[RMDB]
RNA sequence: GGGAACGACUCGAGUAGAGUCGAAAAAAAAGAUAUGGACAAGACAGAGCCUACAUGAGGUCUACCCACCAUACUCGGAAACGAGUAUGAGGACCUUGGGCGACGAAGUCUUGUCCUAAGUCAAAAACCCUAUCGUGUAGUUCGCUACACGAUAGGGAAAAGAAACAACAACAACAAC
Reactivity to 2A3 in 0.01 (KOAc 150mM, MgCl2 10mM, bicine 150mM(pH8.5), 24C), signal-to-noise 1, nucleotides 027 to 126: a000a000a000a000g140a070u150a110u170g010g000a010c000a000a000g000a000c010a010g010a000g040c020c000u140a210c110a260u280g120a030g030g000u090c020u050a180c000c060c020a030c020c000a020u010a000c000u000c000g050g010a040a090a110c000g010a010g010u000a010u020g010a020g040g000a020c000c010u010u030g020g000g000c030g000a140c070g040a100a000g000u000c010u020u020g010u000c000c010u000a000a000g020u000c040a030a000a070a220a220
Reactivity to DMS in 0.01 (KOAc 150mM, MgCl2 10mM, bicine 150mM(pH8.5), 24C), signal-to-noise 1, nucleotides 027 to 126: a000a000a180a050g000a020u030a300u020g000g020a000c000a000a000g000a000c010a040g000a190g000c000c000u020a110c300a110u050g070a000g000g000u000c020u000a050c050c000c070a300c020c000a010u000a000c000u000c000g000g000a080a090a120c010g000a010g000u000a000u000g000a150g000g020a020c000c000u000u000g010g020g000c000g000a110c160g010a160a130g000u000c000u000u000g000u020c000c040u000a000a140g050u000c020a030a070a140a090a120

This 177-nucleotide RNA was probed chemically with 2A3 and DMS. Source: RMDB library TTRDES, as collected in RNAgym. Values are in units of 0.01, from 0 to 300, in steps of 10. The reactions ran in a buffer of 150 mM KOAc, 10 mM MgCl2 and 150 mM bicine (pH 8.5), at 24 C.